[RMDB]
RNA sequence: GGGAACGACUCGAGUAGAGUCGAAAAGUCCCCUCUUUGGGGCCCCAGCUUCAGUGCAGGCAAGGGGUUUCGACCCCUUGCCGUACUGACGCCCGAAUCCUGAUUCCUUGCGAAUCCGUGUUCGGGGCAUUAAAAGGACGUUCGCGUCCUUUUAAUGAAAAGAAACAACAACAACAAC
Reactivity to DMS in 0.01 (KOAc 150mM, MgCl2 10mM, bicine 150mM(pH8.5), 24C), signal-to-noise 2, nucleotides 027 to 126: g010u010c000c000c010c020u010c300u010u000u000g040g020g010g000c020c000c000c000a220g020c160u020u000c010a000g000u000g010c010a110g040g010c000a040a040g010g020g020g040u000u000u010c190g010a040c000c000c000c000u000u000g000c000c000g010u010a000c010u000g000a040c300g000c000c030c010g000a010a020u000c150c020u010g000a030u000u000c000c020u010u000g020c120g000a020a020u000c020c070g000u000g010u000u010c000g030g000g000g000

The record gives the reactivity of an RNA of 177 nucleotides to DMS. Values cover nucleotides 27 to 126. The RNA was probed in 150 mM KOAc, 10 mM MgCl2 and 150 mM bicine (pH 8.5) at 24 C.